Notes
The record gives the reactivity of an RNA of 177 nucleotides to DMS and 2A3.
RNA sequence: GGGAACGACUCGAGUAGAGUCGAAAAUUAGCCCAGACUUAUGAGAGAGUAGUCACCUCUCAGCCCCUCCACCUUGGGGUGCCCUAUCCGAGACACUGCUGUUUCGGUAGAAAGGCUAAGCACGUCGCUGUAAAUACUAGUUCGCUAGUAUUUACAGAAAAGAAACAACAACAACAAC
Reactivity to DMS in 0.01 (KOAc 150mM, MgCl2 10mM, bicine 150mM(pH8.5), 24C), signal-to-noise 9, nucleotides 027 to 126: u010u010a150g010c010c000c010a160g010a120c070u000u000a020u000g000a020g000a020g000a050g010u000a140g000u000c150a150c160c000u000c000u000c010a030g000c010c000c000c010u000c210c150a110c200c160u010u000g010g010g000g020u000g010c000c010c010u000a120u000c000c010g000a030g000a010c000a060c300u000g010c260u000g000u000u000u010c000g000g000u000a010g000a050a100a120g000g000c020u000a020a070g010c110a080c150g000u010c160g010
Reactivity to 2A3 in 0.01 (KOAc 150mM, MgCl2 10mM, bicine 150mM(pH8.5), 24C), signal-to-noise 7, nucleotides 027 to 126: u090u030a030g070c010c000c010a030g070a100c040u060u060a020u070g000a000g000a000g000a020g020u100a040g110u110c060a020c010c000u000c000u000c000a000g010c000c000c000c000u050c060c020a180c030c030u050u080g000g000g000g000u010g000c000c000c000u010a010u000c010c000g010a000g010a000c020a020c140u300g090c100u060g030u010u010u010c000g000g000u010a000g020a010a020a000g000g000c000u010a030a010g060c030a020c090g210u120c070g020
Values cover nucleotides 27 to 126. It was measured as part of the RMDB library VIROID.